The record gives the reactivity of an RNA of 207 nucleotides to 2A3 and DMS. For DMS, 2,935 sequencing reads were counted. For 2A3 the reverse transcriptase was SuperScript II with manganese. Conditions: 150 mM KOAc, 10 mM MgCl2 and 150 mM bicine (pH 8.5), 24 C. Source: RMDB library OK3TST, as collected in RNAgym.

RNA sequence: GGGAACGACUCGAGUAGAGUCGAAAAAGGACUCGCAGGACUCGUAGCACAGUAAUUACAAGCAGACGCAGGCCCAUCUUCCAAUCGUGGUUUCCCCCAGCAGGAUCUGUCUGUGGCAAGGACAUGGUUAGUACUAUCCUGUCCUGCGCUGUCCGUACCUGAUUACUGGUUUCGACCAGUAAUCAGGAAAAGAAACAACAACAACAAC
Reactivity to 2A3 in 0.01 (KOAc 150mM, MgCl2 10mM, bicine 150mM(pH8.5), 24C), signal-to-noise 2, nucleotides 027 to 156: a000g000g000a020c010u010c010g000c000a000g000g000a000c030u050c040g070u050a000g040c040a010c010a040g150u210a060a060u120u110a090c080a110a060g020c010a000g030a050c010g040c030a030g020g010c050c000c000a040u030c030u110u000c030c000a130a190u150c140g090u110g040g020u080u070u170c020c020c000c020c000a020g020c030a030g010g020a000u020c030u100g040u000c010u030g040u010g070g030c060a020a050g040g000a040c020a090u070g040g030u050u060a040g030u050a000c010u020a020u160c020c020u020g010u000c010c000u000g000c000g010c010u010g010u000c000c000g000u000a040
Reactivity to DMS in 0.01 (KOAc 150mM, MgCl2 10mM, bicine 150mM(pH8.5), 24C), signal-to-noise 1, nucleotides 027 to 156: a080g000g010a030c000u010c050g000c020a090g020g000a060c000u010c040g050u000a040g050c030a050c050a180g000u000a050a070u010u000a110c040a080a160g020c090a100g000a060c020g040c030a070g020g010c000c020c030a070u010c060u010u000c090c050a050a120u000c090g050u000g010g000u000u000u000c030c010c010c040c010a150g020c060a080g000g010a050u000c020u010g000u000c010u030g030u010g010g020c070a050a130g020g010a080c040a090u000g030g010u000u000a140g020u000a060c030u000a050u020c040c020u010g020u000c010c030u000g000c010g030c080u000g000u010c000c000g020u000a060